[RMDB]
Structure probing data (DMS and 2A3) for a 207-nucleotide construct. Conditions: 150 mM KOAc, 10 mM MgCl2 and 150 mM bicine (pH 8.5), 24 C. For 2A3 the reverse transcriptase was SuperScript II with manganese. It was measured as part of the RMDB library OK3TST. DMS adducts were read by reverse transcription with MarathonRT.
RNA sequence: GGGAACGACUCGAGUAGAGUCGAAAAGUUAAAGUGUCCUCAUUGAAGCGAAACACGGAGAUUUAGAAAAUGGCUGUAUACACUGGCAAGAUGUUUGAAAGCGAAAACCCGAUUUACGGCGGCACUUAUGAGCUAAUCAUUGAUGAAGAUCGCGUAACACCCUUAAGGGGUUCGCCCCUUAAGGGUGAAAAGAAACAACAACAACAAC
Reactivity to DMS in 0.01 (KOAc 150mM, MgCl2 10mM, bicine 150mM(pH8.5), 24C), signal-to-noise 2, nucleotides 027 to 156: g000u000u010a040a080a150g030u000g000u000c040c030u010c030a160u020u010g010a140a070g030c040g070a150a040a100c100a140c090g050g010a190g000a090u010u000u020a190g000a060a040a030a120u000g010g030c060u010g030u000a090u040a070c050a040c040u000g010g040c030a030a140g040a090u010g000u000u010u000g050a060a080a120g000c090g020a090a040a070a090c030c010c000g010a210u000u000u030a020c030g000g000c040g010g000c070a040c060u010u000a070u000g010a090g030c100u000a050a100u000c040a110u010u010g040a070u000g000a090a090g010a120u010c050g000c040g010u010a070a150
Reactivity to 2A3 in 0.01 (KOAc 150mM, MgCl2 10mM, bicine 150mM(pH8.5), 24C), signal-to-noise 1, nucleotides 027 to 156: g000u050u200a140a090a030g080u060g010u090c030c000u070c020a080u030u140g090a250a000g020c030g030a130a000a000c020a070c100g080g000a090g000a040u070u140u220a090g000a090a080a070a080u140g020g000c010u010g040u080a030u130a070c080a000c000u050g000g010c020a050a020g000a010u040g140u010u170u200g040a090a020a000g030c050g030a030a080a060a140c040c080c010g020a040u000u000u090a040c040g050g000c070g000g000c000a000c020u000u100a030u070g020a010g030c080u050a040a000u020c050a020u000u040g090a000u010g000a100a000g070a040u030c010g000c020g140u020a050a010